[RMDB]
RNA sequence: GGGAACGACUCGAGUAGAGUCGAAAAGUCCUGGGGCAGGAUGAAGUUGACUGCGCUGGCUCCGAACAGCUCGCCCACGCUGGGCGGCGUUUCUUCCCGGUGGAGGGUGCGGAAUACGUCGAAGUAGCGCAGCUGAAUGGUUCGCCAUUCAGCUGCGAAAAGAAACAACAACAACAAC
Reactivity to DMS in 0.01 (KOAc 150mM, MgCl2 10mM, bicine 150mM(pH8.5), 24C), signal-to-noise 1, nucleotides 027 to 126: g030u010c000c010u000g010g000g010g020c100a050g000g010a090u000g000a080a070g020u010u000g000a200c070u000g010c040g010c040u000g020g000c020u000c030c040g020a020a050c050a140g030c020u010c020g010c000c000c000a120c200g000c160u000g000g030g050c220g030g040c240g000u000u000u000c050u000u000c020c030c010g000g000u000g000g030a060g010g020g000u010g000c060g000g000a070a140u010a070c050g000u000c050g000a030a070g010u010a050g020
An RNA of 177 nucleotides, treated with DMS and read out base by base. Conditions: 150 mM KOAc, 10 mM MgCl2 and 150 mM bicine (pH 8.5), 24 C. The data come from the RNA Mapping Database (RMDB), library OK2TST. High DMS reactivity at an A or C suggests that its Watson-Crick edge is free.